[RMDB]
This 177-nucleotide RNA was probed chemically with 2A3. The 2A3 profile rests on 532 reads. It was measured as part of the RMDB library RFM100.
RNA sequence: GGGAACGACUCGAGUAGAGUCGAAAAUUGCCUCAGUGUCUGGGCAAAGCAGACUGUUUUUAAUAGUACUGACUUAAUCCACUGAUGGCUAUAGAAAAACAUUGUGUAAUCCCCGAACACCUUGUGGCCUCUGAAGGGCGUUCGCGCCCUUCAGAGGAAAAGAAACAACAACAACAAC
Reactivity to 2A3 in 0.01 (KOAc 150mM, MgCl2 10mM, bicine 150mM(pH8.5), 24C), signal-to-noise 1, nucleotides 027 to 126: u080u040g040c000c010u000c010a010g000u010g080u070c140u210g030g050g050c180a120a030a000g000c000a020g000a000c000u000g100u000u000u020u040u180a040a000u010a010g030u100a270c000u030g240a080c000u130u110a010a000u040c000c000a000c000u000g010a080u300g010g000c000u020a020u070a120g070a000a040a000a000a000c010a010u020u030g080u000g000u050a040a040u010c000c000c000c020g030a020a000c000a000c010c000u000u000g000u040g000g030